Conditions: 150 mM KOAc, 10 mM MgCl2 and 150 mM bicine (pH 8.5), 24 C.
This 177-nucleotide RNA was probed chemically with DMS and 2A3.
It was measured as part of the RMDB library OK1LIB.
For DMS the reverse transcriptase was MarathonRT.

RNA sequence: GGGAACGACUCGAGUAGAGUCGAAAAGAAUGGAAAGGGAUUGUAGAGAUCAGUGUCGCAGCAUUCUCAAUUAGAUUGUAUAUGGUUACGUGCAGGCCGGGCUUCUGACAGAUACUGGUGCGAAGAAGGGUUAAUUUAACUUCGGUUAAAUUAACCCAAAAGAAACAACAACAACAAC
Reactivity to DMS in 0.01 (KOAc 150mM, MgCl2 10mM, bicine 150mM(pH8.5), 24C), signal-to-noise 4, nucleotides 027 to 126: g010a060a040u030g000g000a040a060a080g000g000g000a120u010u010g010u010a070g000a080g000a020u000c020a040g010u000g010u010c020g050c030a090g010c090a050u000u000c010u000c070a070a120u050u010a090g000a070u020u010g000u020a070u080a060u000g020g010u000u020a050c110g030u010g010c060a050g010g000c050c060g010g000g000c040u010u000c010u010g000a070c090a040g000a040u020a040c070u020g020g030u000g000c060g000a050a070g010a080a120
Reactivity to 2A3 in 0.01 (KOAc 150mM, MgCl2 10mM, bicine 150mM(pH8.5), 24C), signal-to-noise 4, nucleotides 027 to 126: g020a040a050u090g030g020a050a030a030g030g000g030a070u090u130g080u130a050g010a010g000a050u030c020a010g020u030g030u090c020g000c020a030g020c000a020u160u010c020u010c050a030a240u130u110a090g080a230u050u090g060u090a030u050a020u260g110g000u080u120a030c050g000u030g050c020a010g000g070c000c070g010g050g010c000u040u010c000u020g060a020c020a030g010a000u020a070c020u020g010g020u020g050c050g040a060a060g060a120a110